RNA sequence: GGGAACGACUCGAGUAGAGUCGAAAAGUCAUAAAAACAUUGGUCAUCUCAAGGGCAUCGAGCUGGAUGGGGUAUCAGCGGAAGACAUCGCAAGGAUGGAACGGGAGAUGGAGAGGCUGAACCGGGAGACGCCAUCUUAGUUCGCUAAGAUGGCGUCAAAAGAAACAACAACAACAAC
Reactivity to 2A3 in 0.01 (KOAc 150mM, MgCl2 10mM, bicine 150mM(pH8.5), 24C), signal-to-noise 2, nucleotides 027 to 126: g080u110c060a130u290a030a280a030a000a000c110a020u140u170g050g000u080c040a030u020c000u070c080a090a090g000g000g000c000a090u040c110g090a070g060c050u070g030g000a040u040g030g060g000g010u040a100u060c000a090g020c000g060g070a000a000g000a010c030a020u010c020g000c180a130a030g240g000a030u030g000g040a000a010c090g000g000g070a070g010a010u060g010g000a130g000a010g030g090c010u020g000a070a000c020c000g040g040g030a050
Reactivity to DMS in 0.01 (KOAc 150mM, MgCl2 10mM, bicine 150mM(pH8.5), 24C), signal-to-noise 1, nucleotides 027 to 126: g000u010c090a020u040a040a040a070a210a090c030a090u010u000g000g000u000c050a050u020c040u010c060a100a130g000g000g000c050a080u000c060g010a070g010c010u000g000g030a140u000g020g000g040g000u030a050u020c040a000g000c050g000g040a080a040g000a060c070a000u000c060g100c170a010a160g020g000a060u000g000g000a020a100c030g000g000g000a150g000a010u050g020g020a060g000a080g000g040c040u010g000a020a030c080c060g030g000g000a120
This 177-nucleotide RNA was probed chemically with 2A3 and DMS.
Reactivities are given for positions 27 through 126.
The reactions ran in a buffer of 150 mM KOAc, 10 mM MgCl2 and 150 mM bicine (pH 8.5), at 24 C.
The DMS profile rests on 1,705 reads.
It was measured as part of the RMDB library OK1LIB.